The data come from the RNA Mapping Database (RMDB), library OK1LIB. The record gives the reactivity of an RNA of 177 nucleotides to 2A3.
RNA sequence: GGGAACGACUCGAGUAGAGUCGAAAACUGCGCGAUUACACGGCUAAAACCGUACCGGCGUUGGACAUCGAUGCCUACGCACAGCGGGUGUACCAGGCGAACCGAGCGGCCGGAAGUUGAUCGCUCCCCCCGUUCAAGCAUUCGUGCUUGAACGGGGAAAAGAAACAACAACAACAAC
Reactivity to 2A3 in 0.01 (KOAc 150mM, MgCl2 10mM, bicine 150mM(pH8.5), 24C), signal-to-noise 2, nucleotides 027 to 126: c040u150g100c000g000c000g110a010u000u070a000c000a070c030g000g050c100u160a010a000a030a150c000c030g000u010a020c000c000g000g120c130g020u080u050g000g060a050c030a020u030c020g220a300u200g010c000c050u170a180c150g000c050a130c010a150g040c010g000g140g000u050g000u070a250c000c050a000g070g000c000g000a060a050c050c000g020a150g220c030g050g050c020c000g050g000a060a000g120u180u060g030a030u000c000g020c000u000c080c000
2A3 adducts were read by reverse transcription with SuperScript II with manganese.